Structure probing data (2A3 and DMS) for a 207-nucleotide construct. For DMS, 1,893 sequencing reads were counted. The data come from the RNA Mapping Database (RMDB), library OK3TST. 2A3 is a SHAPE reagent: it acylates the 2'-hydroxyl of flexible nucleotides of all four kinds.
RNA sequence: GGGAACGACUCGAGUAGAGUCGAAAAGGGUUUGAGCCAUCGCCCGAAUAGGAUGGGUGAUACAAGUCGUCAUUGUACGCGACGUAGUACGUACUCAUUAGUGCGAAAGCACGGUUAGUCCGACUGGGCAGGGACGAUCUUCUGUCAAUACUUAGAAAUGCCUAAUCGGAUUCGUCCGAUUAGGCAUAAAAGAAACAACAACAACAAC
Reactivity to 2A3 in 0.01 (KOAc 150mM, MgCl2 10mM, bicine 150mM(pH8.5), 24C), signal-to-noise 1, nucleotides 027 to 156: g100g080g000u090u060u180g040a050g060c030c010a000u110c060g000c000c040c000g080a120a080u100a110g070g060a010u140g000g000g000u100g030a000u030a000c040a090a070g040u000c040g010u000c040a080u000u160g110u110a110c010g000c000g080a000c000g010u040a010g050u000a040c010g000u000a000c000u000c040a070u090u090a150g020u000g010c000g010a150a000a000g090c020a000c000g000g000u000u020a000g010u000c060c000g000a010c010u060g000g000g000c030a040g050g010g000a000c000g060a090u010c030u120u040c000u040g010u020c000a060a200u110a110c040u110u060a060g100a050a110
Reactivity to DMS in 0.01 (KOAc 150mM, MgCl2 10mM, bicine 150mM(pH8.5), 24C), signal-to-noise 1, nucleotides 027 to 156: g000g010g010u020u000u000g010a140g000c000c020a050u000c000g010c010c000c000g010a110a140u000a050g050g070a080u020g010g010g010u000g020a080u000a040c080a090a130g000u000c000g000u000c080a180u030u000g000u010a110c110g030c020g000a060c000g010u010a220g100u010a010c020g040u000a070c000u010c060a090u010u000a100g030u010g010c000g000a160a180a210g000c030a010c030g030g040u010u000a110g020u000c010c040g000a300c070u000g050g020g030c040a080g000g000g010a060c050g020a100u000c020u000u000c060u000g000u000c010a040a040u000a100c050u020u000a060g000a050a290